This 177-nucleotide RNA was probed chemically with DMS and 2A3.
[RMDB]
RNA sequence: GGGAACGACUCGAGUAGAGUCGAAAAGAUAUGGACACGGGCUCGCUUGGAUUUACUAAUACACUUUCCCGUAUUCGGAAACGAAUACGCAAGUGUAUUAGUUGUCAGCGAGCCGUGUCCUAAGUCACUCAUUCUGUAGGUUCGCCUACAGAAUGAGAAAAGAAACAACAACAACAAC
Reactivity to DMS in 0.01 (KOAc 150mM, MgCl2 10mM, bicine 150mM(pH8.5), 24C), signal-to-noise 1, nucleotides 027 to 126: g020a040u000a300u010g000g020a010c000a000c010g010g020g030c000u000c000g030c010u010u010g010g020a040u010u010u010a010c000u000a000a000u010a000c000a030c000u000u010u020c300c300c020g010u000a000u000u000c010g030g000a170a100a220c020g000a000a000u000a010c020g100c060a010a020g010u000g010u000a000u000u000a000g010u000u000g000u000c000a010g000c010g000a000g010c010c010g000u000g010u000c000c000u000a020a060g010u020c020a300
Reactivity to 2A3 in 0.01 (KOAc 150mM, MgCl2 10mM, bicine 150mM(pH8.5), 24C), signal-to-noise 1, nucleotides 027 to 126: g040a000u090a040u210g010g020a010c030a020c070g300g300g100c000u000c010g040c000u030u240g220g030a060u300u300u190a020c000u020a030a010u030a030c020a000c000u040u030u090c030c050c000g030u000a030u000u000c010g000g020a030a140a090c000g010a000a000u020a000c000g000c060a000a000g000u000g010u000a010u000u000a030g010u000u000g010u000c000a010g030c000g000a000g000c000c000g000u010g020u000c000c000u000a000a010g000u010c010a020